[RMDB]
RNA sequence: GGGAACGACUCGAGUAGAGUCGAAAACAAGUAAGGCAACUUGUCUUUCUCUUUGGAGGGACCGUCUCAACAUGCCUCAGCCCACUGCAUGCCCAGGAAGUUCACUGAGGUAUCACCUCCCUGAAUUUUCAAGGGGCUUCUCUCUCACCUUGUGGUACAUUACCACUAGCUUCGGCUAGUGGUAAUGAAAAGAAACAACAACAACAAC
Reactivity to 2A3 in 0.01 (KOAc 150mM, MgCl2 10mM, bicine 150mM(pH8.5), 24C), signal-to-noise 4, nucleotides 027 to 156: c020a000a020g080u140a040a070g080g010c050a060a050c070u040u020g010u000c030u030u080u000c030u010c000u100u150u180g080g020a040g010g030g010a040c050c040g090u030c020u020c050a080a100c060a050u050g010c000c020u020c030a040g030c010c020c010a040c020u040g030c050a060u100g000c010c010c000a010g030g020a020a010g010u020u030c010a010c030u020g000a000g020g040u050a110u110c070a040c020c010u000c020c000c000u020g010a040a050u090u040u040u060c060a120a130g010g000g000g000c000u040u020c020u000c000u000c010u030c010a070c030c020u080u130g060u110g070g060u180a030
Reactivity to DMS in 0.01 (KOAc 150mM, MgCl2 10mM, bicine 150mM(pH8.5), 24C), signal-to-noise 1, nucleotides 027 to 156: c020a020a040g030u000a060a050g000g020c050a070a200c040u000u000g000u000c040u000u010u000c000u000c050u000u000u010g020g030a110g010g020g030a040c060c070g030u000c060u000c010a120a130c070a100u000g000c000c050u020c040a140g000c020c030c020a100c110u020g000c040a110u000g010c000c050c040a240g020g020a000a030g030u000u010c020a030c020u000g010a020g030g030u000a160u010c220a110c020c000u010c000c000c020u000g010a040a050u000u000u000u010c020a130a100g010g010g000g010c020u000u000c000u000c020u000c040u010c020a030c040c060u000u010g020u000g010g010u000a130